[RMDB]
An RNA of 177 nucleotides, treated with DMS and 2A3 and read out base by base. Reactivities are given for positions 27 through 126. For DMS, 982 sequencing reads were counted. For 2A3, 1,915 sequencing reads were counted.

RNA sequence: GGGAACGACUCGAGUAGAGUCGAAAAGAUAUGGACACGAGCAUUAUUGUGCGGAGUGUCGGAAACGACCUCGGAUAGCAAUUAUGCGAUGAGUGUCCUAAGUCAAAGUCGUACUUCGGUACGACAAGCCUAAAAUCCGGUUCGCCGGAUUUUAGGCAAAAGAAACAACAACAACAAC
Reactivity to DMS in 0.01 (KOAc 150mM, MgCl2 10mM, bicine 150mM(pH8.5), 24C), signal-to-noise 1, nucleotides 027 to 126: g010a050u000a300u010g000g010a000c000a000c000g000a090g030c010a000u000u000a020u000u020g000u000g040c050g000g010a000g010u030g030u000c000g010g000a050a020a110c030g010a010c010c000u000c030g010g020a200u010a150g000c000a000a020u000u000a000u010g030c000g010a080u000g020a300g000u000g000u020c000c010u030a010a090g020u010c060a020a120a090g000u000c000g010u000a010c000u020u020c160g000g020u000a010c000g010a020c000a040a070
Reactivity to 2A3 in 0.01 (KOAc 150mM, MgCl2 10mM, bicine 150mM(pH8.5), 24C), signal-to-noise 2, nucleotides 027 to 126: g020a000u060a030u150g000g010a000c010a000c030g080a040g020c010a000u000u040a010u010u070g000u100g140c150g130g000a010g000u300g010u010c000g000g020a040a040a000c000g020a000c000c000u030c060g090g040a120u120a110g000c000a020a020u060u000a010u070g060c080g140a210u290g090a070g060u000g000u000c010c010u010a090a030g010u000c070a100a040a040g010u000c000g010u000a010c000u040u060c300g110g020u010a000c000g000a000c000a000a010